[RMDB]
RNA sequence: GGGAACGACUCGAGUAGAGUCGAAAAAAAUCACCGAAUCGGCACCGUCAACUCGGUUUUGUACUUCGACCUGAUCUGUCUGGAUUCCAUCGACGAGAAAAUCCAGGUCAGCUUGGAGUGGAAACGCCUUAUGCUUGCUCUUCGGAGCAAGCAUAAGAAAAGAAACAACAACAACAAC
Reactivity to DMS in 0.01 (KOAc 150mM, MgCl2 10mM, bicine 150mM(pH8.5), 24C), signal-to-noise 1, nucleotides 027 to 126: a050a050a050u010c080a140c030c020g000a100a060u010c040g020g000c090a150c000c040g020u000c090a070a120c060u010c050g020g010u000u000u000u000g010u000a040c000u000u000c020g010a020c100c020u010g000a060u000c060u000g000u010c150u010g000g010a020u000u000c140c180a140u000c110g000a080c250g020a200g010a030a030a040a030u010c020c010a060g010g000u010c010a020g000c300u000u000g020g000a020g040u000g000g000a070a020a090c060g020c210
Annotation:
The record gives the reactivity of an RNA of 177 nucleotides to DMS. The RNA was probed in 150 mM KOAc, 10 mM MgCl2 and 150 mM bicine (pH 8.5) at 24 C. For DMS, 754 sequencing reads were counted. For DMS the reverse transcriptase was MarathonRT.